[RMDB]
RNA sequence: GGGAACGACUCGAGUAGAGUCGAAAAGGUGCAGGUUCAGAGACUAAAUGGGGGUGGGUUUGGAAAACGGACCUUCUAUUUCCCAAGCCUAAGAUAUAGUCCAAUCCCCUAGGGAAACUUAGGGGCUACUACCUCUUCAAGUAGGAUCCUUCAAAUGCCUAUUAAUUAGCUUCGGCUAAUUAAUAGGAAAAGAAACAACAACAACAAC
Reactivity to 2A3 in 0.01 (KOAc 150mM, MgCl2 10mM, bicine 150mM(pH8.5), 24C), signal-to-noise 2, nucleotides 027 to 156: g000g010u030g040c010a000g020g030u020u090c030a030g030a030g040a140c080u140a120a160a280u190g010g010g000g030g010u040g010g010g040u050u040u040g040g030a000a040a030a050c050g030g020a030c000c000u080u040c080u090a080u000u050u040c000c000c000a030a000g020c000c000u050a100a050g050a070u100a020u030a250g020u020c000c020a000a010u000c030c010c000c000u000a000g000g000g020a080a070a000c000u020u010a000g000g020g010g000c000u000a000c000u020a000c000c020u110c020u100u090c080a050a000g010u020a020g000g080a040u100c030c000u040u070c050a070a050a130u200g090